[RMDB]
The record gives the reactivity of an RNA of 177 nucleotides to 2A3 and DMS. The 2A3 profile rests on 4,772 reads.

RNA sequence: GGGAACGACUCGAGUAGAGUCGAAAAGAUAUGGAUGUACAGGGAGCUCCUUCGGAAACGAACGAGCAUCGAUCUGUGACAUCCUAAGUCAAAGCGUACUCUAUUGCUUCGGCAAUAGAGUACGCAACCAGACGAUAUGGUUCGCCAUAUCGUCUGGAAAAGAAACAACAACAACAAC
Reactivity to 2A3 in 0.01 (KOAc 150mM, MgCl2 10mM, bicine 150mM(pH8.5), 24C), signal-to-noise 1, nucleotides 027 to 126: g060a010u070a020u190g000g010a010u010g000u000a010c010a000g060g020g000a010g000c000u010c020c000u010u010c010g010g050a050a100a060c020g000a010a000c030g010a000g000c050a030u140c010g020a050u020c000u000g030u080g080a020c000a000u000c000c000u000a100a030g060u010c030a050a100a030g000c000g000u000a010c000u050c000u010a010u000u010g010c000u050u110c300g100g000c000a000a000u000a000g000a000g000u010a000c000g010c000a000a000
Reactivity to DMS in 0.01 (KOAc 150mM, MgCl2 10mM, bicine 150mM(pH8.5), 24C), signal-to-noise 2, nucleotides 027 to 126: g000a070u000a300u000g000g000a010u010g020u020a030c000a030g000g010g000a020g040c000u000c000c110u020u020c010g000g000a080a110a190c000g030a020a020c300g010a000g000c010a170u000c170g000a070u020c000u000g000u000g020a030c000a010u010c000c010u000a030a080g010u000c050a110a090a100g000c000g000u010a000c000u000c000u000a000u000u000g000c000u000u000c180g040g000c000a000a000u000a000g000a000g000u000a000c000g000c000a010a030
Notes: Reactivities are rounded to 0.1 and cut off at 0 and 3. Source: RMDB library TTRDEL, as collected in RNAgym. The RNA was probed in 150 mM KOAc, 10 mM MgCl2 and 150 mM bicine (pH 8.5) at 24 C.